[RMDB]
Annotation: Structure probing data (DMS and 2A3) for a 177-nucleotide construct. For DMS the reverse transcriptase was MarathonRT. Reactivities are given for positions 27 through 126.

RNA sequence: GGGAACGACUCGAGUAGAGUCGAAAACACUAAGAUGCUGCUGUCCGGUGAUGUGGAAGAGAAUCCCGGCCCGUCGUUGCGCGGGAUGCAGUGGAACUGCGCCGGGCUAUCUCAAGGAAAGAGAUUAGACGGUGAUAAUCUUCGGAUUAUCACCGUCAAAAGAAACAACAACAACAAC
Reactivity to DMS in 0.01 (KOAc 150mM, MgCl2 10mM, bicine 150mM(pH8.5), 24C), signal-to-noise 2, nucleotides 027 to 126: c110a050c140u010a080a050g010a080u000g000c000u000g050c010u000g000u060c040c040g000g000u000g020a110u000g000u040g070g010a050a160g020a060g010a160a130u000c000c000c000g000g000c020c000c010g010u010c050g020u050u040g000c130g030c030g000g000g030a050u030g060c000a020g000u000g000g050a060a300c020u000g050c000g000c000c030g000g030g010c020u000a010u020c000u000c010a080a110g000g000a040a090a020g000a090g000a090u000u000a090
Reactivity to 2A3 in 0.01 (KOAc 150mM, MgCl2 10mM, bicine 150mM(pH8.5), 24C), signal-to-noise 2, nucleotides 027 to 126: c020a000c010u080a020a000g080a020u140g060c010u000g010c060u050g020u080c010c010g040g000u100g010a050u080g020u050g000g030a160a030g020a010g030a030a080u050c000c000c030g000g020c020c030c000g050u040c090g120u200u210g040c080g000c000g000g010g000a010u050g010c000a000g010u140g100g090a110a000c010u020g020c020g010c000c010g000g000g000c050u020a030u060c000u020c040a020a020g190g020a050a050a000g090a030g000a070u060u150a090